[RMDB]
RNA sequence: GGGAACGACUCGAGUAGAGUCGAAAAAGACGUGGUCGAUAUGAAUGUGAUUGCCCUUGCGAUGCGCCAGCACCAGGUCCGCGCGUUUGCCCUCGCCAAUCACCCCGCGAUCCUGGAGAUUAAGCGAUAUGAUAGGACUGUUCGCAGUCCUAUCAUAAAAAGAAACAACAACAACAAC
Reactivity to DMS in 0.01 (KOAc 150mM, MgCl2 10mM, bicine 150mM(pH8.5), 24C), signal-to-noise 4, nucleotides 027 to 126: a080g010a080c080g030u010g020g010u000c020g020a110u010a080u000g020a080a080u010g020u010g010a080u000u010g010c030c010c040u000u000g030c030g010a080u000g010c050g030c050c040a050g010c060a080c030c040a050g000g020u010c050c110g010c040g000c050g010u000u000u000g010c000c020c040u000c030g020c030c050a050a070u010c090a100c050c050c020c010g020c050g000a040u010c020c040u000g010g000a140g000a090u000u000a060a130g010c080g010a140
Reactivity to 2A3 in 0.01 (KOAc 150mM, MgCl2 10mM, bicine 150mM(pH8.5), 24C), signal-to-noise 2, nucleotides 027 to 126: a000g100a040c050g050u070g020g020u080c040g020a040u040a070u270g140a150a050u120g020u040g070a080u020u110g060c000c020c020u000u050g030c040g070a050u050g030c010g030c000c040a020g020c030a000c000c010a020g060g040u010c040c010g000c000g000c030g010u020u020u080g060c000c000c000u020c000g010c020c000a040a030u030c020a070c010c000c000c000g010c010g030a020u000c000c040u030g130g020a130g020a090u090u080a130a000g010c010g040a040